An RNA of 177 nucleotides, treated with 2A3 and DMS and read out base by base. For 2A3, 1,210 sequencing reads were counted. The data come from the RNA Mapping Database (RMDB), library OK2TRN. The RNA was probed in 150 mM KOAc, 10 mM MgCl2 and 150 mM bicine (pH 8.5) at 24 C. Values cover nucleotides 27 to 126. The DMS profile rests on 1,127 reads. DMS adducts were read by reverse transcription with MarathonRT.
RNA sequence: GGGAACGACUCGAGUAGAGUCGAAAAGAUCGUGCAGCAGGCGCUUUACUGGGAUGAGGGAAUGCCGACGCUUCCCUGCGUCAGCAUCAUUUCCAAUGCAGGCGGCAUCCUGCAAGGCGACCGCUAAGACCCUGAGUACUUUCGAGUACUCAGGGUCAAAAGAAACAACAACAACAAC
Reactivity to 2A3 in 0.01 (KOAc 150mM, MgCl2 10mM, bicine 150mM(pH8.5), 24C), signal-to-noise 1, nucleotides 027 to 126: g020a070u170c050g040u080g050c070a010g000c030a070g010g000c030g010c010u050u090u080a160c100u070g000g020g000a010u030g020a070g050g120g160a130a020u070g010c000c030g020a010c020g000c000u120u060c040c000c000u030g000c000g000u000c020a000g000c000a000u000c000a020u040u040u030c000c050a000a050u110g040c000a050g030g000c040g060g010c030a100u170c010c000u000g000c010a010a000g020g030c000g010a170c030c020g020c080u010a090a000
Reactivity to DMS in 0.01 (KOAc 150mM, MgCl2 10mM, bicine 150mM(pH8.5), 24C), signal-to-noise 1, nucleotides 027 to 126: g000a060u020c100g020u040g000c170a190g030c050a050g010g000c080g000c020u010u000u000a070c110u000g020g000g000a020u000g000a110g020g000g000a090a030u000g010c010c040g020a030c040g050c010u000u000c110c020c000u030g000c000g020u000c000a020g020c050a010u000c050a060u000u000u000c050c030a060a150u010g000c030a030g010g000c090g010g020c140a070u010c020c000u000g000c020a060a050g000g000c040g000a040c010c020g010c100u000a120a170